[RMDB]
RNA sequence: GGGAACGACUCGAGUAGAGUCGAAAAACUUUUUGAUUCGUCAAAAAGUAACUACCGAGAAUGCGACUCGGUAUAGGCAAAUAACCCUUGGAAACAAGGGAACAAACUAACGUUUCGACGUUAGUAAGGUAUGUACUCCAUUCGUGGAGUACAUACCAAAAGAAACAACAACAACAAC
Reactivity to 2A3 in 0.01 (KOAc 150mM, MgCl2 10mM, bicine 150mM(pH8.5), 24C), signal-to-noise 3, nucleotides 027 to 126: a000c010u030u000u000u000u000g010a020u030u050c080g050u000c060a010a000a000a000a000g010u020a040a060c010u020a010c000c000g020a010g040a110a110u240g100c110g130a050c010u000c000g000g020u010a040u070a010g010g000c080a080a050a030u140a090a140c010c000c000u000u010g010g000a040a030a010c000a000a010g000g010g010a000a040c010a000a070a000c010u000a000a000c000g020u000u070u140c240g120a020c000g000u020u000a010g010u030a070a040
Reactivity to DMS in 0.01 (KOAc 150mM, MgCl2 10mM, bicine 150mM(pH8.5), 24C), signal-to-noise 2, nucleotides 027 to 126: a030c000u000u000u000u000u000g000a020u010u010c170g000u000c020a000a000a000a000a000g010u000a060a150c090u000a030c020c020g000a020g000a090a140u020g010c250g000a110c010u000c030g010g000u000a030u000a060g010g010c230a030a050a020u030a110a130c000c000c000u010u000g000g000a150a130a150c000a010a000g000g000g000a050a050c130a100a090a040c000u000a000a000c000g010u000u000u010c130g030a050c000g020u000u000a000g040u000a070a060